The data come from the RNA Mapping Database (RMDB), library OK2TRN. This 177-nucleotide RNA was probed chemically with DMS and 2A3. The RNA was probed in 150 mM KOAc, 10 mM MgCl2 and 150 mM bicine (pH 8.5) at 24 C. DMS adducts were read by reverse transcription with MarathonRT. Reactivities are rounded to 0.1 and cut off at 0 and 3. For 2A3 the reverse transcriptase was SuperScript II with manganese.
[RMDB]
RNA sequence: GGGAACGACUCGAGUAGAGUCGAAAAGCCGUAAUAUUACGCGAUAUGCGCAUCGUAUAAUCGCGAUGCAUAUGCAUUAUACGCGCGUAGCGCGCGCAUAUUAUAUAAUUACGGCCGGCCGCGAUCGCCAUACAUCAACCUUCGGGUUGAUGUAUGGAAAAGAAACAACAACAACAAC
Reactivity to DMS in 0.01 (KOAc 150mM, MgCl2 10mM, bicine 150mM(pH8.5), 24C), signal-to-noise 3, nucleotides 027 to 126: g000c010c010g000u020a020a020u000a060u030u010a090c200g030c090g010a040u000a030u000g000c040g000c050a130u010c100g050u000a030u010a070a060u000c180g000c010g000a040u030g000c160a150u000a050u020g010c030a070u000u000a040u000a030c020g010c110g030c020g010u000a100g010c050g050c180g010c020g010c060a030u000a010u000u000a110u000a080u000a080a040u000u000a020c000g010g000c020c030g010g040c020c020g010c070g000a100u020c180g010
Reactivity to 2A3 in 0.01 (KOAc 150mM, MgCl2 10mM, bicine 150mM(pH8.5), 24C), signal-to-noise 3, nucleotides 027 to 126: g000c000c000g000u010a040a030u080a060u110u120a040c050g020c020g020a020u020a020u080g000c040g010c050a090u130c070g000u030a000u020a160a070u070c080g010c030g060a040u090g030c030a050u110a060u280g010c000a010u050u020a030u070a050c050g020c010g010c030g130u130a080g060c030g010c020g000c000g010c040a020u020a030u110u090a080u050a020u050a130a130u000u000a000c000g010g010c040c020g040g060c010c000g150c060g040a070u180c070g000